[RMDB]
RNA sequence: GGGAACGACUCGAGUAGAGUCGAAAAUAUGCCUCUCUUCGUGAAGGAUUUUCUAACCAGUAUGGUUGAAAGCGAAAGAAAGUUGUCCGAUUCUGCGACAUCGGCUAAGUUCUUACCGAUAAAACCGAUGGACAUUCCAUUUCGAUGGAAUGUCCAUAAAAGAAACAACAACAACAAC
Reactivity to 2A3 in 0.01 (KOAc 150mM, MgCl2 10mM, bicine 150mM(pH8.5), 24C), signal-to-noise 1, nucleotides 027 to 126: u220a050u110g100c030c000u040c060u070c020u090u000c120g090u040g040a040a010g010g020a000u020u030u020u030c010u090a000a120c020c000a090g130u250a270u300g060g090u080u040g040a210a050a040g060c030g010a000a070a040g000a030a000a000g090u040u010g040u140c020c010g010a000u060u000c050u300g070c000g090a060c030a020u000c000g010g000c010u060a060a000g000u000u000c030u000u000a120c060c000g000a000u030a080a120a000a010c000c100g000
Reactivity to DMS in 0.01 (KOAc 150mM, MgCl2 10mM, bicine 150mM(pH8.5), 24C), signal-to-noise 1, nucleotides 027 to 126: u010a080u010g010c000c000u000c110u000c000u020u020c190g070u010g000a060a020g000g020a040u010u000u010u000c120u030a130a200c120c050a190g000u020a120u000g010g000u000u000g010a030a150a180g000c030g000a080a040a040g000a040a020a070g000u010u000g000u010c010c020g000a040u000u000c080u000g020c090g040a040c150a040u000c000g000g000c080u000a030a070g010u000u010c030u000u000a170c130c030g020a040u000a030a110a030a030c030c020g020
Structure probing data (2A3 and DMS) for a 177-nucleotide construct.
The 2A3 profile rests on 571 reads.
It was measured as part of the RMDB library OK2TRN.
Reactivities are given for positions 27 through 126.